[RMDB]
RNA sequence: GGGAACGACUCGAGUAGAGUCGAAAACUAAUCCGGAUGGUACACGCCGUCCGCUUGAGGGCUUUUUCAUUUGGACUCCCACAGAGCGACGUAUCAUCUCCGGGUCUCCCGAUGAGGUAAUUCAGCCUGCGGGAUUUGCUGUCGAACUGAAAGCUGGCAUUUCUUGGCUGUUCGCAGCCAAGAAAUGAAAAGAAACAACAACAACAAC
Reactivity to 2A3 in 0.01 (KOAc 150mM, MgCl2 10mM, bicine 150mM(pH8.5), 24C), signal-to-noise 1, nucleotides 027 to 156: c060u050a090a070u020c000c020g000g000a010u010g000g030u040a050c090a010c180g000c020c000g050u010c020c080g000c010u080u080g010a130g020g060g000c040u170u170u050u040u170c180a200u110u030u120g110g010a030c000u050c000c000c000a050c040a000g040a030g000c030g080a070c100g020u040a020u050c000a020u000c000u000c050c010g070g000g100u080c070u050c000c000c000g000a120u140g100a010g000g030u050a110a030u160u100c040a030g020c000c000u050g000c010g030g010g100a080u160u140u170g000c010u020g010u010c020g050a080a060c040u100g000a070a020a000g010c010u050g070g010
Source information
An RNA of 207 nucleotides, treated with 2A3 and read out base by base. Conditions: 150 mM KOAc, 10 mM MgCl2 and 150 mM bicine (pH 8.5), 24 C.